[RMDB]
RNA sequence: GGGAACGACUCGAGUAGAGUCGAAAACAGUGAGACUUCGGUCUCACUGAAAUGACUAUGCACCAUGACGAGGACGAACAUGCGGAGGACGACGAGGAACAAAAACAGCAAGGUUCGCCUUGCUGAACAGCAACGAACGGUUCGCCGUUCGUUGCUGAAAAGAAACAACAACAACAAC
Reactivity to DMS in 0.01 (KOAc 150mM, MgCl2 10mM, bicine 150mM(pH8.5), 24C), signal-to-noise 1, nucleotides 027 to 126: c000a000g040u020g010a010g010a000c000u000u060c160g030g000u000c000u010c000a000c010u000g010a010a010a040u020g000a090c170u000a060u000g060c020a090c140c060a020u000g000a090c060g020a050g000g010a140c060g020a030a050c090a030u010g090c050g040g020a000g020g000a080c060g000a140c040g020a110g010g070a050a030c090a060a020a180a090a060c040a010g020c000a000a010g000g000u010u020c190g000c000c000u010u000g000c030u020g090a010a110